[RMDB]
RNA sequence: GGGAACGACUCGAGUAGAGUCGAAAAGAGGGGGAUUCCCGGGUGGUCUUCCCGAUUCCCUCCUCCCUCCACUCGUCCUCGUGGAAGUUCGAGAUGAGGGGGCUCGUGAAGGCUGCUCCCGAGGGAGCACCGCACUUCCCUUCGGGGAAGUGCGGUGAAAAGAAACAACAACAACAAC
Reactivity to DMS in 0.01 (KOAc 150mM, MgCl2 10mM, bicine 150mM(pH8.5), 24C), signal-to-noise 1, nucleotides 027 to 126: g030a080g000g020g020g020g010a190u000u000c030c000c040g040g000g010u000g000g020u000c000u000u010c010c030c010g000a130u010u000c040c000c000u000c020c020u030c000c030c010u000c020c170a140c020u000c090g000u000c010c000u000c150g020u000g020g000a090a070g010u010u000c050g010a020g020a160u000g020a060g010g010g020g000g000c300u010c050g020u010g000a060a020g000g010c020u000g010c050u000c000c000c070g010a100g020g000g000a060g000